This 177-nucleotide RNA was probed chemically with DMS and 2A3. Reactivities are given for positions 27 through 126. The 2A3 profile rests on 1,632 reads.

RNA sequence: GGGAACGACUCGAGUAGAGUCGAAAAUCGACACCGCCCGACCGACGCGGGCCCAGUGGUCGAGCUGCUGCUUGGCCGAACGGCUCUGACGAGCACCCUCGGCCGCCGCGCUGUCCACCAGAUCCGCGUAGCAAACUGGCUUCGGCCAGUUUGCUACAAAAGAAACAACAACAACAAC
Reactivity to DMS in 0.01 (KOAc 150mM, MgCl2 10mM, bicine 150mM(pH8.5), 24C), signal-to-noise 1, nucleotides 027 to 126: u040c180g000a060c100a150c090c030g000c030c010c010g000a130c130c000g000a000c080g000c030g000g020g070c000c040c000a110g090u030g000g000u000c000g000a000g000c080u000g000c000u000g010c030u040u040g000g010c000c000g000a030a030c300g000g000c000u040c000u000g030a090c300g000a000g010c000a090c130c020c190u000c000g010g030c010c000g000c000c030g000c000g000c040u000g020u040c010c000a060c000c060a080g010a050u000c000c050g060c030
Reactivity to 2A3 in 0.01 (KOAc 150mM, MgCl2 10mM, bicine 150mM(pH8.5), 24C), signal-to-noise 2, nucleotides 027 to 126: u090c000g020a010c030a020c050c020g040c010c000c000g030a070c020c040g040a040c040g010c000g000g010g010c040c020c010a040g020u040g030g000u020c040g170a030g010c120u260g000c010u030g000c000u200u260g000g000c000c000g000a100a030c060g040g000c000u000c030u060g190a100c130g000a020g000c020a130c000c060c000u010c010g000g000c000c000g000c000c040g000c010g000c000u020g030u000c000c000a010c000c010a030g020a050u000c000c000g000c000